[RMDB]
RNA sequence: GGGAACGACUCGAGUAGAGUCGAAAAGGGCACUUGGGAAGAUGUCAGCGUAUAGCUUCAGUUUAGUCCAAGCGAGGAGCUUUAUCGCCUGGUGCUGCCUUAAGAUCCUAGCCUGACAUGCCUGCAGCCAUUAUAUAAUCUUCGGAUUAUAUAAUGGAAAAGAAACAACAACAACAAC
Reactivity to 2A3 in 0.01 (KOAc 150mM, MgCl2 10mM, bicine 150mM(pH8.5), 24C), signal-to-noise 9, nucleotides 027 to 126: g010g010g010c040a020c080u080u070g030g010g030a090a070g060a160u070g040u060c010a010g010c020g030u050a040u020a110g010c000u010u010c010a050g010u020u050u170a070g020u030c070c030a020a000g010c010g030a200g020g020a020g010c000u050u070u060a140u170c030g020c040c010u020g020g000u040g010c010u030g020c000c000u060u070a030a010g030a030u050c020c020u030a030g010c000c000u020g020a030c010a060u080g040c000c020u040g020c020a030g060
Reactivity to DMS in 0.01 (KOAc 150mM, MgCl2 10mM, bicine 150mM(pH8.5), 24C), signal-to-noise 9, nucleotides 027 to 126: g010g010g010c050a080c050u010u010g000g000g010a100a060g010a070u000g010u000c030a060g010c050g020u010a050u000a040g010c010u000u000c020a150g000u000u000u010a090g010u010c220c130a040a040g010c020g000a120g020g000a040g000c040u000u000u000a040u010c040g010c090c040u000g000g010u000g010c020u000g000c060c020u000u010a050a050g010a160u000c040c040u000a090g010c030c020u000g000a060c090a060u000g010c040c020u000g010c170a120g000
Annotation
An RNA of 177 nucleotides, treated with 2A3 and DMS and read out base by base. Conditions: 150 mM KOAc, 10 mM MgCl2 and 150 mM bicine (pH 8.5), 24 C. 2A3 adducts were read by reverse transcription with SuperScript II with manganese. It was measured as part of the RMDB library OK2TRN.